Structure probing data (DMS and 2A3) for a 177-nucleotide construct. Reactivities are given for positions 27 through 126. For 2A3 the reverse transcriptase was SuperScript II with manganese. Source: RMDB library M2PK90, as collected in RNAgym.
[RMDB]
RNA sequence: GGGAACGACUCGAGUAGAGUCGAAAAAGAAACAUCACUAUUUACCAGGUCAGGUCCGGAAGGAAGCAGCCAAGGCAGAUGACGCGUGUGCCGGGAUGAUGCUGGCAGCGCAAAAUAGAAAAAAAAAACACUAGGUAAGGUUCGCCUUACCUAGUGUAAAAGAAACAACAACAACAAC
Reactivity to DMS in 0.01 (KOAc 150mM, MgCl2 10mM, bicine 150mM(pH8.5), 24C), signal-to-noise 1, nucleotides 027 to 126: a090g020a080a050a130c050a020u000c040a090c000u010a030u000u010u020a060c010c040a150g020g010u010c020a260g030g000u000c020c020g010g050a120a140g030g010a040a080g000c030a130g010c030c050a080a130g020g000c000a060g000a030u010g020a170c060g000c020g020u000g030u030g010c000c010g020g000g010a190u000g000a080u020g020c000u020g010g000c020a110g000c000g000c020a020a020a010a020u000a060g010a000a010a000a000a000a040a030a040a100
Reactivity to 2A3 in 0.01 (KOAc 150mM, MgCl2 10mM, bicine 150mM(pH8.5), 24C), signal-to-noise 1, nucleotides 027 to 126: a010g050a000a040a000c020a020u020c000a000c070u090a140u140u070u080a090c020c020a010g070g000u060c010a010g000g030u010c010c000g040g050a060a010g040g000a040a000g000c010a000g000c030c000a040a080g040g000c000a060g010a130u040g030a080c110g020c040g050u300g100u120g060c000c050g090g000g000a150u280g020a060u230g130c010u020g010g000c000a010g020c000g000c010a000a000a060a020u080a000g230a000a040a020a010a000a000a040a000a030